[RMDB]
RNA sequence: GGGAACGACUCGAGUAGAGUCGAAAAUGGGAUGUUGGUCCCCAACACUUAGACCCAGUGAAGAGGGGUGAGAUGCAUUUUCAUUGGCUUUAGAUGUGGAUAUUAGGUGAAGCUGAGGGGUCGGUAGACCCAUCGCCUCGUUCGCGAGGCGAUGGGUAAAAGAAACAACAACAACAAC
Reactivity to 2A3 in 0.01 (KOAc 150mM, MgCl2 10mM, bicine 150mM(pH8.5), 24C), signal-to-noise 3, nucleotides 027 to 126: u070g000g020g040a070u080g030u120u050g090g070u090c040c000c010c000a050a050c000a020c070u070u080a030g050a070c010c010c010a000g030u040g090a050a050g020a060g040g020g000g020u020g040a190g020a020u120g030c050a070u060u020u030u070c050a050u040u080g080g000c020u050u050u140a070g030a130u150g050u060g090g030a040u040a080u220u200a120g050g030u060g040a040a020g000c010u010g020a040g030g030g000g060u020c000g020g030u040a050g030
Reactivity to DMS in 0.01 (KOAc 150mM, MgCl2 10mM, bicine 150mM(pH8.5), 24C), signal-to-noise 5, nucleotides 027 to 126: u000g000g000g000a080u000g010u000u000g010g000u010c010c010c000c050a090a120c040a030c060u010u000a090g000a110c050c010c020a110g020u000g010a060a090g010a110g010g010g010g000u000g010a080g010a110u010g010c070a050u000u010u000u000c040a070u000u000g020g000c080u010u010u020a080g010a090u010g020u010g010g010a070u000a070u000u000a090g000g010u000g000a100a090g010c050u010g010a080g000g010g020g010u000c030g010g000u000a100g010
Structure probing data (2A3 and DMS) for a 177-nucleotide construct. The RNA was probed in 150 mM KOAc, 10 mM MgCl2 and 150 mM bicine (pH 8.5) at 24 C. Values cover nucleotides 27 to 126. For 2A3 the reverse transcriptase was SuperScript II with manganese. The data come from the RNA Mapping Database (RMDB), library OK2TRN.